[RMDB]
RNA sequence: GGGAACGACUCGAGUAGAGUCGAAAAUUCUUUUCCAUCAGUUCGACGCAAACCUGUAAGAACUCUCAGACAAAUACCACGGGGGAAUAGCACUGGGAGCAAAGUUCAUGGUUUAAGAUCCCCUCAAUGCUGAUUUUACAUUCGUGUAAAAUCAGCAAAAAGAAACAACAACAACAAC
Reactivity to DMS in 0.01 (KOAc 150mM, MgCl2 10mM, bicine 150mM(pH8.5), 24C), signal-to-noise 1, nucleotides 027 to 126: u000u000c070u000u000u000u000c030c040a120u000c120a150g010u000u010c030g000a140c180g010c090a020a110a030c070c030u000g000u010a030a130g040a120a120c030u000c010u000c010a030g000a070c050a140a120a090u000a140c120c050a140c230g000g070g010g050g000a090a090u020a080g030c160a070c020u000g030g000g000a050g000c090a100a090a050g010u010u010c030a050u020g030g010u000u000u000a040a100g020a150u000c000c000c000c050u000c140a060a070
Structure probing data (DMS) for a 177-nucleotide construct. The reactions ran in a buffer of 150 mM KOAc, 10 mM MgCl2 and 150 mM bicine (pH 8.5), at 24 C. DMS adducts were read by reverse transcription with MarathonRT. Source: RMDB library OK2TRN, as collected in RNAgym.